[RMDB]
RNA sequence: GGGAACGACUCGAGUAGAGUCGAAAAUACUGUGCAUACGAUGGUAAUGAUGCAGUCGACUUAAUUUAUGAAGAAGAACCAGACAUCGUAUUACUAGAUAUCAUGUUACCUGGUCGUGAUGGUAUGGCCAUGAAGGCGGGUUCGCCCGCCUUCAUGGAAAAGAAACAACAACAACAAC
Reactivity to DMS in 0.01 (KOAc 150mM, MgCl2 10mM, bicine 150mM(pH8.5), 24C), signal-to-noise 1, nucleotides 027 to 126: u010a050c110u020g010u000g190c300a090u020a090c060g020a000u010g000g000u030a080a110u010g010a020u070g020c190a100g010u010c000g000a170c040u030u040a020a120u120u040u010a090u040g000a000a030g000a110a130g000a030a030c070c070a050g000a070c000a020u000c080g000u000a000u010u020a020c040u000a110g000a020u020a000u000c030a070u050g000u000u030a100c000c000u010g000g010u000c060g000u010g020a110u000g010g000u000a050u010g000g030
Reactivity to 2A3 in 0.01 (KOAc 150mM, MgCl2 10mM, bicine 150mM(pH8.5), 24C), signal-to-noise 2, nucleotides 027 to 126: u030a000c000u000g030u040g000c000a000u010a000c020g110a100u020g140g000u050a080a070u120g080a130u150g010c000a040g030u020c000g110a010c020u050u170a120a100u180u220u130a300u180g040a080a080g090a050a020g000a000a000c020c000a000g010a050c000a000u030c040g050u020a030u000u060a000c140u000a000g070a300u020a060u070c070a000u080g000u020u000a050c000c000u000g000g010u040c000g000u140g000a040u000g000g000u020a120u130g080g000